[RMDB]
RNA sequence: GGGAACGACUCGAGUAGAGUCGAAAAAGGUGAUUUCUACUGCACCUUUAUCAAUGGAGGAACUCGACUUUGCUGUGGGUCCCAAAGGGACCUUAGGUGCAGACAGUUACCGGCGGUGAAGUGUGAGCAUAGGUUCGUGUCUUCGGACACGAACCAAGGUUAGUAGAGUCUUCGGACUCUACUAACCAAAAGAAACAACAACAACAAC
Reactivity to 2A3 in 0.01 (KOAc 150mM, MgCl2 10mM, bicine 150mM(pH8.5), 24C), signal-to-noise 2, nucleotides 027 to 156: a000g110g030u050g030a120u060u130u110c070u220a040c050u090g000c010a020c000c000u050u030u030a120u060c080a030a050u090g040g010a040g030g070a070a030c000u040c020g040a040c040u040u030u090g010c040u010g010u130g040g000g000u010c000c000c070a080a150a110g020g010g010a010c000c000u040u060a030g000g010u010g010c050a000g060a100c030a010g040u050u120a020c000c000g020g010c050g000g020u020g010a010a040g060u060g020u060g070a030g050c080a120u090a180g020g000u000u000c000g000u000g010u000c000u010u030c170g050g000a000c000a000c010g010a000a000c000c000a000a000
An RNA of 207 nucleotides, treated with 2A3 and read out base by base. Values cover nucleotides 27 to 156. For 2A3, 1,039 sequencing reads were counted.